[RMDB]
This 177-nucleotide RNA was probed chemically with 2A3 and DMS. The DMS profile rests on 4,457 reads. 2A3 adducts were read by reverse transcription with SuperScript II with manganese.

RNA sequence: GGGAACGACUCGAGUAGAGUCGAAAAGAUAUGGAUGUAUCGUAGGGAGAAGUGUCAUCGGAAACGAUGACGCUUCGAAGAACUACGAGUACAUCCUAAGUCAAAGAAGAGUGCUUCGGCACUCUUCGGUGUAUUACCGGUUCGCCGGUAAUACACCAAAAGAAACAACAACAACAAC
Reactivity to 2A3 in 0.01 (KOAc 150mM, MgCl2 10mM, bicine 150mM(pH8.5), 24C), signal-to-noise 3, nucleotides 027 to 126: g030a000u060a030u150g000g010a000u010g020u020a030u030c000g010u010a000g000g050g000a190g000a010a020g010u010g010u020c000a010u000c010g040g050a070a030a040c000g000a000u000g000a000c000g000c010u010u000c020g000a020a000g030a010a040c000u010a000c000g000a020g020u010a010c000a000u000c000c000u010a070a030g010u020c080a230a020a210g010a010a000g010a000g000u020g000c020u070u170c300g150g010c000a010c010u000c000u000u000c010
Reactivity to DMS in 0.01 (KOAc 150mM, MgCl2 10mM, bicine 150mM(pH8.5), 24C), signal-to-noise 4, nucleotides 027 to 126: g010a030u000a300u010g000g000a000u000g030u000a060u010c010g020u000a000g010g000g010a110g010a010a010g020u010g020u000c000a010u000c010g010g020a110a090a180c000g020a020u000g010a010c000g000c000u010u000c010g010a070a120g000a120a180c000u000a000c010g000a060g000u010a010c000a000u010c000c010u000a010a130g020u000c020a120a110a180g000a010a010g000a030g020u000g000c000u010u020c240g040g010c000a000c000u000c000u000u000c000